Chemical mapping of a 207-nucleotide RNA with 2A3. 2A3 is a SHAPE reagent: it acylates the 2'-hydroxyl of flexible nucleotides of all four kinds. The reactions ran in a buffer of 150 mM KOAc, 10 mM MgCl2 and 150 mM bicine (pH 8.5), at 24 C. Reactivities are rounded to 0.1 and cut off at 0 and 3.
RNA sequence: GGGAACGACUCGAGUAGAGUCGAAAAUCGUUUACGGAUCCACGUGAUCGCGCUCACGUUCACCUUCACGGUCCAGGUGUACUGGGCUCGACGGAUGGUGGUGCGGGCGUUGGCUCUCGGCGGCCGAUUCUGGCUGUUCCCUCGGCCGCGGAACAGGCUUUCGAAGACGAUUCGUCGUCUUCGAAAGAAAAGAAACAACAACAACAAC
Reactivity to 2A3 in 0.01 (KOAc 150mM, MgCl2 10mM, bicine 150mM(pH8.5), 24C), signal-to-noise 1, nucleotides 027 to 156: u100c020g000u050u020u170a120c060g000g010a000u040c020c050a140c230g090u210g000a070u070c010g000c000g030c030u070c000a060c050g090u260u170c070a070c000c000u000u000c030a030c070g000g030u010c030c000a000g020g000u220g050u240a070c030u000g000g000g000c090u140c030g080a110c170g070g010a000u050g010g060u000g000g030u030g000c050g000g000g010c000g000u010u050g030g000c010u010c020u000c080g150g000c000g020g000c000c010g000a000u140u070c100u200g280g000c030u000g020u040u000c000c000c000u000c000g010g000c000c070g010c000g000g010a060a030c060a030g100g000